[RMDB]
RNA sequence: GGGAACGACUCGAGUAGAGUCGAAAACAAACAACAAAACAAACAAAACAACAAACAAAACCAAAACAAAACAAAACAAAACCGGCUAACUCCGUGCCAGCAGCCGCGGAAAAACAACAAAACAAAAGCAUCGCUACGACUUCGGUCGUAGUGAUGCAAAAGAAACAACAACAACAAC
Reactivity to 2A3 in 0.01 (KOAc 150mM, MgCl2 10mM, bicine 150mM(pH8.5), 24C), signal-to-noise 1, nucleotides 027 to 126: c020a020a040a010c100a010a000c030a060a250a000a000c110a120a100a000c040a050a150a050a000c060a050a010c090a120a080a040c010a050a050a000a090c020c010a000a080a080a040c070a010a050a120a000c050a000a090a100a070c080a000a130a000a010c010c070g020g000c010u000a000a000c000u000c000c000g050u040g010c010c000a080g000c010a000g050c080c000g050c000g040g010a040a050a000a000a000c070a050a000c090a000a090a000a000c000a000a060a000a050

Description: The record gives the reactivity of an RNA of 177 nucleotides to 2A3. Conditions: 150 mM KOAc, 10 mM MgCl2 and 150 mM bicine (pH 8.5), 24 C.